[RMDB]
RNA sequence: GGGAACGACUCGAGUAGAGUCGAAAAUUAAAAGAGGAAGAGCUUCCUUAUAAAAAUCAUAGCCUGCAAGUAAAGGUUCUCCUCCAUGGAAGGUGAAGUGAACCGGCUCAUCCAUAAAAUCAGCUAGCGAUCCUAAAUGGUUCGCCAUUUAGGAUCGAAAAGAAACAACAACAACAAC
Reactivity to 2A3 in 0.01 (KOAc 150mM, MgCl2 10mM, bicine 150mM(pH8.5), 24C), signal-to-noise 4, nucleotides 027 to 126: u190u140a070a050a010a060g050a020g020g010a040a100g020a040g100c040u060u020c020c000u050u060a140u090a150a160a030a000a010u200c070a070u030a050g040c000c010u040g040c050a110a060g040u160a160a060a010g040g000u020u000c010u010c020c000u000c010c020a080u140g080g070a090a080g070g010u060g040a050a030g050u060g050a020a020c010c000g010g000c000u020c020a060u000c010c020a020u100a160a040a030a080u090c030a020g110c040u080a010g060
Reactivity to DMS in 0.01 (KOAc 150mM, MgCl2 10mM, bicine 150mM(pH8.5), 24C), signal-to-noise 2, nucleotides 027 to 126: u010u030a080a030a100a110g020a030g010g020a030a040g000a130g040c050u000u000c010c020u000u000a090u010a050a140a150a120a080u010c060a070u000a080g000c060c010u010g000c170a060a060g000u020a120a080a080g000g000u000u000c000u000c040c000u010c040c060a110u030g020g030a020a030g000g000u030g050a130a140g010u000g000a040a050c120c000g020g000c030u010c050a050u010c040c010a050u030a060a020a100a040u010c120a060g010c070u010a040g000